[RMDB]
RNA sequence: GGGAACGACUCGAGUAGAGUCGAAAAGAAAGUUUGCCUGUGUGUGGAUGGUGUUCAGCACCAAGGACAGGUGUGUUGGCCUGUGUGUGGAUGGUGUUCAGCACCAAGGACAGGCAUGUUUGCCUAAAGACCACUUAAGUUUCGACUUAAGUGGUCUAAAAGAAACAACAACAACAAC
Reactivity to 2A3 in 0.01 (KOAc 150mM, MgCl2 10mM, bicine 150mM(pH8.5), 24C), signal-to-noise 4, nucleotides 027 to 126: g050a010a030a000g070u040u050u050g020c020c000u010g000u040g010u040g030u100g210g140a260u130g010g000u020g000u020u020c030a000g000c000a010c000c010a020a010g050g030a000c000a000g000g010u030g010u010g030u020u110g060g000c000c000u010g000u000g020u010g060u080g260g060a190u050g020g000u000g000u000u020c010a010g010c010a000c000c000a020a000g050g010a000c000a000g000g000c000a000u010g010u010u090u040g030c000c000u110a230a130
Reactivity to DMS in 0.01 (KOAc 150mM, MgCl2 10mM, bicine 150mM(pH8.5), 24C), signal-to-noise 3, nucleotides 027 to 126: g010a090a030a100g020u000u000u000g000c010c010u000g010u020g020u020g040u030g020g020a170u000g020g040u000g020u000u000c300a020g030c010a010c000c010a050a210g000g000a030c010a000g000g020u000g020u020g010u000u010g010g020c000c000u000g000u000g010u000g000u000g000g000a170u000g000g000u000g020u000u000c240a020g000c000a010c000c000a020a120g010g000a020c010a000g000g020c020a010u000g000u000u000u010g010c020c010u010a050a120